Source information
The record gives the reactivity of an RNA of 207 nucleotides to 2A3 and DMS. For 2A3 the reverse transcriptase was SuperScript II with manganese. Conditions: 150 mM KOAc, 10 mM MgCl2 and 150 mM bicine (pH 8.5), 24 C. For 2A3, 528 sequencing reads were counted.
RNA sequence: GGGAACGACUCGAGUAGAGUCGAAAAAUACAUACUGACACCGGUUGCUCAACAGGCUGUGUUGGACAAUAGAAUAACAAGGCUGUCAAUUUGAGCUUGACGGCUGCAAACCGAAUGGAGUGAAAUCGUAACCGGACUCACUUCGGUGAGUCCGGAAUCAUAAGGGUGAGUUCGCUCACCCUUAUGAAAAAGAAACAACAACAACAAC
Reactivity to 2A3 in 0.01 (KOAc 150mM, MgCl2 10mM, bicine 150mM(pH8.5), 24C), signal-to-noise 1, nucleotides 027 to 156: a000u190a010c040a000u130a030c020u030g040a000c000a000c060c080g120g000u000u060g040c020u020c030a050a020c030a060g100g030c060u080g030u000g040u120u000g000g030a000c030a060a060u120a110g090a030a080u210a110a050c080a130a020g030g040c000u000g000u060c040a000a040u140u130u100g040a060g040c030u010u040g000a010c000g000g000c040u010g040c060a030a150a000c070c030g120a040a040u130g030g070a070g040u060g070a000a000a130u180c160g010u100a040a020c000c000g000g010a000c000u000c000a000c010u030u090c080g050g000u010g000a000g000u020c000c010g000g000a000a000
Reactivity to DMS in 0.01 (KOAc 150mM, MgCl2 10mM, bicine 150mM(pH8.5), 24C), signal-to-noise 1, nucleotides 027 to 156: a050u000a140c040a070u000a190c120u000g000a100c010a060c060c010g000g040u000u000g000c010u000c040a060a040c000a040g010g010c060u010g000u000g010u000u000g040g000a040c040a080a100u000a100g000a130a140u010a060a100c030a100a130g010g020c040u000g000u000c000a020a020u000u000u010g000a200g050c300u000u010g040a040c020g030g030c000u000g010c080a040a120a120c040c000g020a020a160u000g000g000a100g020u000g000a080a060a130u010c010g010u000a130a160c000c000g020g020a060c010u000c020a020c040u000u000c300g050g010u000g010a020g010u000c000c000g020g000a000a000